[RMDB]
RNA sequence: GGGAACGACUCGAGUAGAGUCGAAAAGAUCACCUGAGGUCGGGAGUUCAAGACCAGCCUGGCCAACAUGGCGAAAUCCCGUCUCUACUAAAAGUUAAAAAAUUAGCCAGGCGUAGUGGUGGGCACCUGUAAUCCCAGCUACUCAGGAGGCUGAGGAUGAGUAAUUAAAUUUCGAUUUAAUUACUCAAAAAGAAACAACAACAACAAC
Reactivity to DMS in 0.01 (KOAc 150mM, MgCl2 10mM, bicine 150mM(pH8.5), 24C), signal-to-noise 2, nucleotides 027 to 156: g000a140u000c000a080c040c000u020g010a110g040g000u010c000g020g070g000a090g030u000u000c100a050a080g000a070c040c030a130g020c020c000u000g030g040c030c030a030a200c070a140u000g010g050c010g000a040a130a070u000c020c020c000g000u000c020u000c020u000a100c030u010a060a040a060a080g020u000u020a010a040a060a040a100a080u000u010a050g000c030c030a090g020g020c020g030u000a020g030u000g030g060u000g010g030g040c080a050c020c010u010g010u000a040a120u000c000c000c000a080g010c020u000a040c030u020c040a130g020g020a140g010g020c010u010g010a040g030g010a140
Reactivity to 2A3 in 0.01 (KOAc 150mM, MgCl2 10mM, bicine 150mM(pH8.5), 24C), signal-to-noise 1, nucleotides 027 to 156: g030a030u060c010a010c040c000u000g010a000g030g010u060c040g000g010g020a050g060u170u300c170a190a020g070a110c040c040a000g010c020c010u000g020g000c010c000a030a010c100a070u220g000g000c020g010a010a030a060u060c000c010c000g010u010c030u000c000u010a060c060u060a010a080a020a010g070u080u060a060a130a020a080a130a200u090u180a000g010c010c000a000g020g030c000g030u030a010g010u010g070g070u030g000g020g000c010a010c060c020u100g080u120a010a040u010c000c000c000a000g000c000u010a030c010u020c120a010g020g110a010g080g070c020u010g050a020g080g010a060

Record summary: This 207-nucleotide RNA was probed chemically with DMS and 2A3. Source: RMDB library OK3TST, as collected in RNAgym. For DMS the reverse transcriptase was MarathonRT. 2A3 adducts were read by reverse transcription with SuperScript II with manganese. The RNA was probed in 150 mM KOAc, 10 mM MgCl2 and 150 mM bicine (pH 8.5) at 24 C. The DMS profile rests on 3,056 reads.